[RMDB]
RNA sequence: GGGAACGACUCGAGUAGAGUCGAAAAGGCAACCUUCGGGUUGCCAAAAAAGCGUACUACGUGUGCAUUGAUGACCUUAGAACUACUGCGAUCCCAAAUAGGAUCGCAGCUAAGCAAGAUGGCACGUAUCGCAAAAACAGCGUCUUCGGACGCUGAAUACUCACGAAAGUUUCGACUUUCGUGAGUAAAAAGAAACAACAACAACAAC
Reactivity to DMS in 0.01 (KOAc 150mM, MgCl2 10mM, bicine 150mM(pH8.5), 24C), signal-to-noise 1, nucleotides 027 to 156: g010g040c000a010a000c010c010u030u010c300g040g050g010u000u010g000c000c000a000a010a020a110a040a110g000c000g020u030a100c010u000a020c020g000u000g000u000g000c000a080u000u020g080a130u010g030a120c300c030u050u020a130g000a120a200c080u010a170c000u010g000c000g000a070u000c000c000c000a030a160a120u030a070g000g000a030u030c030g030c000a000g000c000u000a020a040g000c010a110a300g000a030u000g000g000c020a000c000g100u000a000u000c020g070c030a090a070a120a080a240c000a030g050c020g020u000c000u000u000c300g050g000a020c010g000c000u040g000a060a100
Reactivity to 2A3 in 0.01 (KOAc 150mM, MgCl2 10mM, bicine 150mM(pH8.5), 24C), signal-to-noise 2, nucleotides 027 to 156: g000g050c000a000a000c010c010u070u100c170g000g020g000u000u000g030c000c000a020a010a000a000a000a000g010c020g060u100a060c070u010a010c040g030u040g000u010g300c040a000u000u030g050a190u110g040a230c000c010u000u000a010g000a050a060c080u260a050c000u300g000c010g000a040u000c000c060c000a020a260a130u260a010g000g000a000u000c000g000c000a020g000c000u000a000a000g010c020a060a070g050a000u020g000g050c030a000c000g050u000a040u240c000g000c010a090a000a000a000a000c000a000g030c010g020u050c020u050u080c120g140g000a000c000g030c000u000g000a000a010

An RNA of 207 nucleotides, treated with DMS and 2A3 and read out base by base.
DMS adducts were read by reverse transcription with MarathonRT.
For DMS, 1,804 sequencing reads were counted.
Source: RMDB library RNAMAK, as collected in RNAgym.